This 177-nucleotide RNA was probed chemically with 2A3 and DMS. DMS (dimethyl sulfate) methylates the pairing face of unpaired adenines and cytosines. Reactivities are rounded to 0.1 and cut off at 0 and 3. The RNA was probed in 150 mM KOAc, 10 mM MgCl2 and 150 mM bicine (pH 8.5) at 24 C. DMS adducts were read by reverse transcription with MarathonRT. It was measured as part of the RMDB libraries RFM100 and RFMREP.
RNA sequence: GGGAACGACUCGAGUAGAGUCGAAAACGGGGAGCGCGCGAGCGAGGCGGGCCCACAGCCCCCGCCGCGGAGCCGAGGGCAAGGUCUGGUGCCAGCAGCCGCGGUAAUUCCAGCUCGGCGAGCGUCGCCAUUAUUACACUUUCGAGUGUAAUAAUGGAAAAGAAACAACAACAACAAC
Reactivity to 2A3 in 0.01 (KOAc 150mM, MgCl2 10mM, bicine 150mM(pH8.5), 24C), signal-to-noise 9, nucleotides 027 to 126: c020g020g010g010g030a100g050c020g000c030g010c010g020a020g010c020g010a020g030g020c070g020g010g010c000c050c030a170c030a030g040c010c000c000c000c010g000c000c000g000c020g010g010a010g030c030c030g040a110g020g020g010c040a060a050g040g030u050c090u180g130g030u170g050c010c000a030g030c120a020g030c020c010g000c000g000g000u020a020a030u140u030c030c010a010g010c010u000c000g050g000c010g010a010g010c030g140u070c020g000
Reactivity to DMS in 0.01 (KOAc 150mM, MgCl2 10mM, bicine 150mM(pH8.5), 24C), signal-to-noise 9, nucleotides 027 to 126: c060g010g010g010g010a090g000c020g010c020g020c020g000a050g010c020g010a060g020g020c080g010g010g010c080c040c110a090c270a120g000c070c080c010c020c020g010c010c010g010c080g010g010a120g010c060c040g010a060g000g000g000c020a180a100g000g010u020c050u030g010g010u020g000c010c010a070g010c120a120g000c010c010g000c010g000g000u000a070a110u040u020c060c060a210g000c010u000c020g000g010c010g000a080g010c030g000u010c060g010